[RMDB]
RNA sequence: GGGAACGACUCGAGUAGAGUCGAAAAGUGCUCAAGUGGUCUUCCUGCCUCAGCCUCCCAGUAGCUGAGACUACAGGCCUGUGCCACCACACCUGGAUUUUUUUUUUUUUUUUGAGACAAAGUCUCACUCUGUCGCCUAGGCUGGAGUGCAAUGGCACCCAACUGACUAUUUCGAUAGUCAGUUGGGAAAAGAAACAACAACAACAAC
Reactivity to 2A3 in 0.01 (KOAc 150mM, MgCl2 10mM, bicine 150mM(pH8.5), 24C), signal-to-noise 1, nucleotides 027 to 156: g100u110g000c020u030c090a130a050g000u040g030g000u000c010u030u040c000c020u030g020c010c020u030c020a030g000c000c020u100c020c000c000a000g040u050a010g000c020u000g010a000g010a020c040u060a020c030a000g000g050c000c060u010g030u070g050c070c020a040c100c000a000c000a000c010c020u010g010g000a000u000u000u000u010u000u000u000u000u000u020u020u000u030u080u130u040g060a050g000a010c090a060a190a030g000u000c010u020c000a020c020u000c010u040g110u200c100g000c060c070u050a080g020g000c030u050g050g110a030g010u080g030c030a030a150u100g000g000c040a040